Conditions: 150 mM KOAc, 10 mM MgCl2 and 150 mM bicine (pH 8.5), 24 C. The record gives the reactivity of an RNA of 177 nucleotides to DMS and 2A3. 2A3 adducts were read by reverse transcription with SuperScript II with manganese. For 2A3, 1,147 sequencing reads were counted. For DMS, 949 sequencing reads were counted. The data come from the RNA Mapping Database (RMDB), library OK2TRN.
[RMDB]
RNA sequence: GGGAACGACUCGAGUAGAGUCGAAAAGUGCUGCUGAAGAUCGCCAGGAUCGGCAACAUGGACAACAGCAUCGUCGAGGAGAACGGCAACUCGUCGGCGGCAUCGGGCUCCAAUGACGUGGUCGAUGGCCCGCUAGUAUGUUCGCAUACUAGCGGGCAAAAGAAACAACAACAACAAC
Reactivity to DMS in 0.01 (KOAc 150mM, MgCl2 10mM, bicine 150mM(pH8.5), 24C), signal-to-noise 1, nucleotides 027 to 126: g000u000g000c000u000g000c030u010g020a060a170g030a130u010c150g080c000c090a070g040g010a050u000c050g030g020c040a010a090c160a040u010g000g010a120c050a060a060c100a110g000c050a040u010c060g020u000c020g000a070g010g000a040g020a110a110c130g020g000c040a130a090c050u000c020g000u000c010g060g010c070g020g030c100a050u000c060g000g000g000c010u020c010c020a050a180u000g000a060c090g000u000g000g000u010c060g000a040u020g000
Reactivity to 2A3 in 0.01 (KOAc 150mM, MgCl2 10mM, bicine 150mM(pH8.5), 24C), signal-to-noise 1, nucleotides 027 to 126: g030u050g000c010u000g000c000u050g050a060a000g040a150u020c070g020c050c030a060g090g100a040u040c010g020g040c010a030a060c010a040u080g020g000a000c000a160a000c010a040g070c010a040u070c050g050u020c020g000a010g050g060a070g020a170a050c030g100g000c010a030a020c020u000c010g240u000c000g020g010c000g000g040c010a010u080c030g060g030g040c000u000c040c000a060a080u200g060a050c100g070u050g010g000u010c010g040a050u070g080